Chemical mapping of a 177-nucleotide RNA with DMS. The data come from the RNA Mapping Database (RMDB), library TTRINS. The RNA was probed in 150 mM KOAc, 10 mM MgCl2 and 150 mM bicine (pH 8.5) at 24 C. DMS adducts were read by reverse transcription with MarathonRT.

RNA sequence: GGGAACGACUCGAGUAGAGUCGAAAAGAUAUGGACAUGUUGGAUUUGCGAUAUUACUGGAGCUGACCAUCGGAAACGAUGGGCAGCGUUGAAAGUACUGUAUCGCAAAUCCAACAUGUCCUAAGUCCAUACUGGAGCAGUUCGCUGCUCCAGUAUGAAAAGAAACAACAACAACAAC
Reactivity to DMS in 0.01 (KOAc 150mM, MgCl2 10mM, bicine 150mM(pH8.5), 24C), signal-to-noise 3, nucleotides 027 to 126: g000a110u010a300u010g020g020a030c000a000u000g000u000u000g010g000a000u000u000u000g020c020g000a000u000a010u000u000a010c010u000g010g010a180g020c020u010g010a020c000c000a030u000c010g000g000a150a110a250c000g010a000u000g000g010g000c000a010g010c000g020u000u030g000a130a110a030g000u000a010c300u010g020u010a000u000c010g000c010a010a010a010u010c000c010a000a010c000a000u000g000u010c000c000u000a010a040g000u010c050